[RMDB]
RNA sequence: GGGAACGACUCGAGUAGAGUCGAAAAGCCAUCCGAGUGGACGUCUGUCCUCCUUCGGAUGCCCAGGUCGGACCGCGGGGAGGUGGAGAUGCCAUGCCGACCCGAAGAGGAAAGAAGGACUCGGACGAGAUCGUGGUGUUCGCACCACGAAAAAGAAACAACAACAACAAC
Reactivity to DMS in 0.01 (KOAc 150mM, MgCl2 10mM, bicine 150mM(pH8.5), 24C), signal-to-noise 6, nucleotides 027 to 129: g000c290c020a040u000c000c030g020a010g000u020g030g020a030c000g050u070c200u090g010u000c000c000u030c080c110u050u000c000g010g020a040u040g020c060c010c020a130g000g000u010c070g040g020a050c050c060g040c110g000g030g000g010a060g020g000u040g010g010a060g000a080u070g020c040c030a030u080g040c070c030g000a110c030c000c010g010a040a040g010a100g050g020a030a050a030g000a070a060g010g000a000c070u020c070g040g020a050c100g020a090g010a100
Reactivity to 2A3 in 0.01 (KOAc 150mM, MgCl2 10mM, bicine 150mM(pH8.5), 24C), signal-to-noise 7, nucleotides 027 to 129: g050c020c000a010u000c010c010g010a010g030u030g000g020a010c030g140u120c200u300g020u000c010c020u040c020c050u090u060c010g010g010a010u010g000c010c000c000a040g020g070u050c030g020g000a060c030c000g010c040g010g010g000g000a030g000g030u070g010g030a150g020a050u130g060c020c030a060u110g030c000c010g020a040c000c000c010g010a020a000g040a030g020g000a040a030a010g040a020a020g000g010a020c010u010c010g010g010a020c010g020a030g010a060